[RMDB]
RNA sequence: GGGAACGACUCGAGUAGAGUCGAAAAGAACAAACAAUCUUUGUGUAAAUAUUCUCAAAGCUAGACAAAUGAGAGAAAGUCCCAAGGAUAGAUUGUCCAACAGAUUGAUUCAAGCUGAAACAGCUAGGCUAACGAAGGGAUUCGUCCCUUCGUUAGCAAAAGAAACAACAACAACAAC
Reactivity to DMS in 0.01 (KOAc 150mM, MgCl2 10mM, bicine 150mM(pH8.5), 24C), signal-to-noise 2, nucleotides 027 to 126: g000a110a080c070a020a060a200c020a030a080u010c010u000u000u010g010u000g000u010a010a090a130u000a230u010u030c000u010c010a010a070a260g000c170u000a130g010a140c110a080a070a100u000g000a170g000a060g020a070a070a200g010u000c000c050c010a050a110g000g020a010u000a120g010a090u010u010g040u000c040c090a120a120c180a070g000a040u010u010g000a100u000u000c110a020a010g010c010u000g000a140a100a090c120a060g000c020u000a120g010
Reactivity to 2A3 in 0.01 (KOAc 150mM, MgCl2 10mM, bicine 150mM(pH8.5), 24C), signal-to-noise 1, nucleotides 027 to 126: g020a020a000c020a070a020a000c040a050a070u000c040u020u030u020g070u000g010u090a040a140a030u090a080u200u000c000u000c000a060a080a010g050c050u100a030g010a080c040a100a170a110u140g000a040g000a000g020a010a050a000g130u090c050c000c010a000a010g050g010a000u000a060g140a050u040u080g020u020c000c020a030a030c040a050g060a160u070u110g020a020u100u210c060a040a010g000c000u000g050a160a150a050c020a040g040c020u060a040g140
Conditions: 150 mM KOAc, 10 mM MgCl2 and 150 mM bicine (pH 8.5), 24 C. Chemical mapping of a 177-nucleotide RNA with DMS and 2A3. Reactivities are given for positions 27 through 126. It was measured as part of the RMDB library OK2TST. For DMS the reverse transcriptase was MarathonRT. In probing experiments dimethyl sulfate is read out at A N1 and C N3, which are open when not base-paired. 2A3 adducts were read by reverse transcription with SuperScript II with manganese. For DMS, 779 sequencing reads were counted.